[RMDB]
RNA sequence: GGGAACGACUCGAGUAGAGUCGAAAACGAAUCAAUGAGUGGCGGUAAAAACACGGUCGUUUUAGAUAAUAUCGGGAUGCCUUCGAUAGUUUAUAGGGUUCAGAGAUUUAACCUUAGUGACAUCGAGGCUGGAGCGCCUAACAGACCUCACGAUAUAGAUUAUAUCGCACUUCGGUGCGAUAUAAUCAAAAGAAACAACAACAACAAC
Reactivity to DMS in 0.01 (KOAc 150mM, MgCl2 10mM, bicine 150mM(pH8.5), 24C), signal-to-noise 1, nucleotides 027 to 156: c010g000a140a190u000c060a120a120u000g010a060g070u000g030g020c070g000g010u000a040a060a150a150a050c050a030c050g000g010u000c010g000u000u000u000u000a040g030a220u000a080a140u010a030u010c010g020g000g010a050u000g010c020c040u000u000c010g040a030u000a030g040u000u000u000a070u000a020g010g000g030u010u000c050a170g020a300g020a240u000u000u000a020a020c010c000u010u000a010g000u010g000a030c060a080u000c020g000a030g000g060c020u000g020g010a050g030c030g030c030c010u000a100a090c040a160g010a030c000c000u010c000a070c040g050a080u000a040u010a230
Reactivity to 2A3 in 0.01 (KOAc 150mM, MgCl2 10mM, bicine 150mM(pH8.5), 24C), signal-to-noise 3, nucleotides 027 to 156: c020g010a010a040u110c080a040a130u090g070a050g060u040g010g040c070g070g020u130a060a050a020a060a030c080a030c020g040g020u010c040g020u040u010u110u170a040g020a050u130a110a020u040a040u050c020g030g000g030a040u070g000c010c000u060u130c040g010a010u030a050g010u000u010u110a090u060a000g000g010g000u010u050c100a020g050a040g030a300u050u140u130a010a000c000c000u020u010a040g040u030g070a010c000a000u020c020g000a000g000g000c000u010g000g000a030g020c050g010c020c000u030a060a020c040a030g040a090c000c010u050c040a020c040g000a010u060a000u050a080